[RMDB]
RNA sequence: GGGAACGACUCGAGUAGAGUCGAAAAAUCCUGUAAUCCUCCGGGGACCACCGGUGGCGAAGGCGUCCUACCAGAACAGGUCCGACGGUGAGGGACGAAAGCUAGGGGCACGAACCGGAUUAGAUACCUAUCAGUUACUGUUCGCAGUAACUGAUAGAAAAGAAACAACAACAACAAC
Reactivity to 2A3 in 0.01 (KOAc 150mM, MgCl2 10mM, bicine 150mM(pH8.5), 24C), signal-to-noise 2, nucleotides 027 to 126: a000u010c010c010u030g090u090a070a200u010c010c010u000c000c030g000g040g000g050a040c000c050a060c020c030g130g110u120g010g010c030g010a060a030g200g010c020g000u000c010c000u030a030c000c020a060g040a120a060c050a090g090g060u060c020c040g060a110c060g000g080u120g300a180g060g000g010a000c010g020a090a000a010g030c000u020a040g060g020g000g010c050a030c090g010a000a020c000c020g000g000a010u040u120a030g010a020u070a050c010
Reactivity to DMS in 0.01 (KOAc 150mM, MgCl2 10mM, bicine 150mM(pH8.5), 24C), signal-to-noise 3, nucleotides 027 to 126: a080u000c000c000u010g010u010a120a120u000c020c080u010c010c000g000g000g000g000a160c130c080a060c010c030g020g030u000g010g000c030g020a110a110g030g000c060g010u020c010c020u010a180c020c020a110g020a140a120c200a090g000g000u020c050c000g000a160c060g010g040u000g020a130g000g000g010a000c060g010a060a110a110g000c040u010a100g010g010g000g010c110a070c070g010a150a150c030c020g000g000a070u010u000a100g000a100u000a040c110